[RMDB]
RNA sequence: GGGAACGACUCGAGUAGAGUCGAAAAGAUAUGGAAAUGAUCCAGCGAGGAUGUGUUCAUUUGCCCGUAUCGGAAACGAUACAGGGUUUCGAAAUGAACACAUCCUCGCUGGGCAUUUCCUAAGUCAGUAAACAAUAACGUUCGCGUUAUUGUUUACAAAAGAAACAACAACAACAAC
Reactivity to DMS in 0.01 (KOAc 150mM, MgCl2 10mM, bicine 150mM(pH8.5), 24C), signal-to-noise 2, nucleotides 027 to 126: g010a030u010a300u000g010g010a000a020a020u010g000a120u000c000c000a010g000c010g000a020g000g010a020u000g000u000g020u010u010c000a010u000u000u010g000c000c000c000g010u000a000u010c000g010g010a150a120a240c000g020a030u000a000c000a170g030g010g010u010u000u010c300g000a030a010a020u000g000a010a010c010a010c000a000u000c000c000u000c000g000c000u010g000g010g020c010a000u000u000u010c000c000u000a010a060g000u000c080a130